[RMDB]
RNA sequence: GGGAACGACUCGAGUAGAGUCGAAAAAGAGUAAUGGGAGUGCAGUGCAGGGAGCUUCAAGCAGAGAGGUAGAGCCAUAGAGAGCUAGGGAGAGGCCAGAACCUCCCAGCUUAGAGCCCCUCAGACUUGUAUUUGCUUCCAGCUUCAAGUCUGGAUAUAUCCUUUUAGCGUUCGCGCUAAAAGGAUAAAAAGAAACAACAACAACAAC
Reactivity to DMS in 0.01 (KOAc 150mM, MgCl2 10mM, bicine 150mM(pH8.5), 24C), signal-to-noise 2, nucleotides 027 to 156: a100g000a110g010u010a120a120u010g010g010g020a060g030u000g000c040a060g020u000g050c070a040g030g010g000a070g010c280u000u000c050a030a110g050c010a170g010a080g010a040g000g030u000a110g030a080g010c030c040a190u000a140g000a130g030a080g000c030u000a100g030g020g010a100g020a050g020g030c040c140a140g000a050a080c030c020u000c010c000c000a100g010c010u000u000a060g010a150g010c010c000c000c030u000c020a100g030a080c030u020u000g010u000a080u010u000u010g000c030u010u000c020c010a050g020c040u000u000c010a040a050g010u010c010u000g010g000a100u010a280
Reactivity to 2A3 in 0.01 (KOAc 150mM, MgCl2 10mM, bicine 150mM(pH8.5), 24C), signal-to-noise 3, nucleotides 027 to 156: a000g070a010g020u120a110a080u080g010g010g010a010g020u080g000c050a030g020u010g080c030a030g020g010g020a030g000c010u090u090c050a030a000g000c030a010g020a000g010a010g050g010u080a040g020a030g070c020c000a010u170a030g100a010g020a000g060c030u160a160g010g040g010a070g020a050g010g030c040c060a070g030a090a040c010c000u000c000c000c000a000g000c000u010u020a010g010a020g030c000c000c000c000u000c000a030g030a060c000u010u040g020u110a130u110u110u110g000c010u200u050c040c050a010g010c000u020u050c000a020a010g010u010c010u010g010g000a000u000a000

The record gives the reactivity of an RNA of 207 nucleotides to DMS and 2A3. For DMS the reverse transcriptase was MarathonRT. The RNA was probed in 150 mM KOAc, 10 mM MgCl2 and 150 mM bicine (pH 8.5) at 24 C. For DMS, 3,069 sequencing reads were counted.